[RMDB]
RNA sequence: GGGAACGACUCGAGUAGAGUCGAAAAAUUGUGCGGUCUCUGAGAGAGGAGAACCUGUCUGAGAGAGCUUACCGCUAUUCAUAGUGGCUCUCUGAGAGACUCUGAGGCUCCUCUCGUUCCCAACCAAACAUGUGUGUACUUUCGAGUACACACAUGUAAAAGAAACAACAACAACAAC
Reactivity to 2A3 in 0.01 (KOAc 150mM, MgCl2 10mM, bicine 150mM(pH8.5), 24C), signal-to-noise 2, nucleotides 027 to 126: a000u100u080g050u080g010c020g020g050u040c030u050c050u200g050a060g000a000g000a010g130g000a030g040a130a230c000c000u050g070u000c010u110g030a020g000a000g000a000g020c010u050u170a080c030c030g010c050u030a080u080u210c080a080u060a130g060u070g060g000c000u010c000u000c010u030g000a070g010a000g000a110c020u010c120u270g090a050g050g000c000u000c000c010u000c000u000c000g000u000u000c000c000c000a020a020c030c040a070a080
Reactivity to DMS in 0.01 (KOAc 150mM, MgCl2 10mM, bicine 150mM(pH8.5), 24C), signal-to-noise 3, nucleotides 027 to 126: a110u000u000g010u000g020c070g020g000u000c060u010c080u010g000a170g010a030g010a010g010g000a030g000a050a100c020c020u000g000u000c000u020g010a020g010a010g000a020g000c090u000u000a080c120c080g020c060u000a120u000u020c230a130u000a060g010u000g010g000c000u010c000u000c000u000g010a070g000a050g010a060c050u010c170u010g000a120g010g030c000u000c000c000u000c010u000c010g000u000u000c010c000c000a130a130c140c130a050a120
Conditions: 150 mM KOAc, 10 mM MgCl2 and 150 mM bicine (pH 8.5), 24 C. An RNA of 177 nucleotides, treated with 2A3 and DMS and read out base by base. For 2A3, 2,674 sequencing reads were counted. The data come from the RNA Mapping Database (RMDB), library M2PK90.